[RMDB]
RNA sequence: GGGAACGACUCGAGUAGAGUCGAAAAUGAUCGCUCGGAGAACGAUGCGGAUUCCGGUCCGGAGCUGCGAGGUACUGAAGAUGGGGCUAGGAUGCCCCUACAAUACGAAUCGGAGCGAGCGCGCUGGUGUCGACUGUGCGGACACGAGCCGACAGGGGCAACAAUACUGGUUCGCCAGUAUUGUUGCAAAAGAAACAACAACAACAAC
Reactivity to 2A3 in 0.01 (KOAc 150mM, MgCl2 10mM, bicine 150mM(pH8.5), 24C), signal-to-noise 2, nucleotides 027 to 156: u200g090a090u070c010g010c030u000c040g090g010a110g050a220a110c000g060a090u230g020c000g040g040a080u130u000c080c000g040g070u000c050c090g050g000a100g070c050u100g050c030g020a030g050g050u070a030c000u210g060a040a000g060a060u080g000g000g000g010c000u040a050g100g210a090u230g010c040c000c000c000u000a000c020a010a050u090a020c030g140a070a030u020c030g000g020a010g080c030g040a060g080c020g000c030g010c080u040g000g020u030g000u030c060g060a060c030u160g030u170g090c070g010g000a020c000a010c060g060a000g000c050c030g020a050c000a060g000g000g060
Chemical mapping of a 207-nucleotide RNA with 2A3.
For 2A3 the reverse transcriptase was SuperScript II with manganese.
The reactions ran in a buffer of 150 mM KOAc, 10 mM MgCl2 and 150 mM bicine (pH 8.5), at 24 C.
For 2A3, 674 sequencing reads were counted.